[RMDB]
An RNA of 177 nucleotides, treated with DMS and 2A3 and read out base by base. DMS adducts were read by reverse transcription with MarathonRT. The reactions ran in a buffer of 150 mM KOAc, 10 mM MgCl2 and 150 mM bicine (pH 8.5), at 24 C.
RNA sequence: GGGAACGACUCGAGUAGAGUCGAAAAUGCGGGGUAUUUCGACAUCGACUGGGAUCUCGACGAGCACGGUCGAAUCGUGCUGCCGGUGCUGGGUUCUGACGCAGACGUGGCCGACCUGUUGGUCGACCUCCAGGACGUACUUCGGUACGUCCUGGAGAAAAGAAACAACAACAACAAC
Reactivity to DMS in 0.01 (KOAc 150mM, MgCl2 10mM, bicine 150mM(pH8.5), 24C), signal-to-noise 2, nucleotides 027 to 126: u030g020c040g000g030g010g030u010a090u010u000u010c030g000a020c030a110u010c060g000a060c080u000g000g040g000a090u000c030u010c150g040a030c160g010a040g000c030a060c040g000g010u010c190g000a060a050u010c020g000u000g000c050u000g000c070c000g020g000u060g020c040u000g020g010g050u000u020c000u000g010a140c110g010c030a050g000a060c000g010u010g050g000c000c000g010a000c010c000u020g010u020u050g000g000u000c010g000a100c140
Reactivity to 2A3 in 0.01 (KOAc 150mM, MgCl2 10mM, bicine 150mM(pH8.5), 24C), signal-to-noise 2, nucleotides 027 to 126: u190g000c030g000g040g010g000u070a260u040u040u040c100g000a070c050a130u020c000g060a060c070u050g000g100g000a070u000c050u000c030g080a080c020g030a010g030c010a020c030g050g020u080c080g080a040a050u100c000g010u040g030c010u030g090c040c000g040g010u020g010c020u070g010g060g000u110u050c020u040g040a030c040g000c040a010g010a060c080g020u030g010g000c000c000g000a030c000c000u060g060u110u240g030g000u000c010g020a050c030